[RMDB]
RNA sequence: GGGAACGACUCGAGUAGAGUCGAAAAUACUUCCAGCUCUUCCUCUCACCAAUUGACGCGUCGGAAACCUGGCCGGGCCUCGUCGAAUUGGAAAACCCUUCAAACGGUCCUUCCACAAGUACCAGCAGCGCUGACUAUUAUUCGUAAUAGUCAGCGCAAAAGAAACAACAACAACAAC
Reactivity to DMS in 0.01 (KOAc 150mM, MgCl2 10mM, bicine 150mM(pH8.5), 24C), signal-to-noise 1, nucleotides 027 to 126: u010a160c090u020u000c030c000a060g060c110u000c000u000u000c020c010u010c060u000c080a140c070c050a010a040u020u000g000a060c070g010c300g020u000c050g030g030a020a050a070c040c110u000g020g030c080c170g010g000g000c020c120u000c030g020u000c060g000a070a020u000u000g000g020a050a070a050a100c030c040c030u000u000c080a040a050a080c230g000g010u000c000c030u000u000c020c020a040c110a030a120g000u000a150c030c050a050g030c120a190
The data come from the RNA Mapping Database (RMDB), library OK2TST. Structure probing data (DMS) for a 177-nucleotide construct. For DMS, 577 sequencing reads were counted. DMS adducts were read by reverse transcription with MarathonRT. Values cover nucleotides 27 to 126.